Structure probing data (2A3 and DMS) for a 177-nucleotide construct. Source: RMDB library OK1LIB, as collected in RNAgym. For DMS the reverse transcriptase was MarathonRT. For 2A3 the reverse transcriptase was SuperScript II with manganese.
RNA sequence: GGGAACGACUCGAGUAGAGUCGAAAAAUUGAUAAACUCAUUGAAAAUAUAAAUCACCUAUCCCCUCCCCCGUGUAUUCACUUACUUCCGAAGGAGAAUAUUAAAUAAUGUCUGUAGGACAGGUAAACGUGAGUAGCAAAUUCGUUUGCUACUCACGAAAAGAAACAACAACAACAAC
Reactivity to 2A3 in 0.01 (KOAc 150mM, MgCl2 10mM, bicine 150mM(pH8.5), 24C), signal-to-noise 2, nucleotides 027 to 126: a000u100u160g030a040u150a130a180a110c040u040c110a110u080u130g070a080a060a160a000u160a070u060a070a090a040u100c030a080c000c020u050a060u070c040c000c000c000u020c020c000c000c000c040g000u020g000u050a110u010u060c040a020c000u000u100a050c000u020u010c030c040g010a060a020g070g020a030g080a080a030u090a040u040u290a040a060a050u210a050a070u060g050u050c040u100g230u120a020g150g000a010c030a010g070g000u070a120a070a000
Reactivity to DMS in 0.01 (KOAc 150mM, MgCl2 10mM, bicine 150mM(pH8.5), 24C), signal-to-noise 2, nucleotides 027 to 126: a060u020u000g010a080u010a110a050a170c170u010c060a040u000u050g000a080a140a150a120u030a100u020a020a180a050u000c050a140c050c000u000a090u010c000c000c040c020u000c050c000c090c000c020g000u020g000u010a040u000u000c000a090c020u000u020a030c110u010u020c050c100g010a050a130g000g010a060g000a030a060u020a020u040u000a000a090a160u040a050a050u000g000u010c000u000g020u000a050g000g000a210c050a020g010g030u000a010a080a150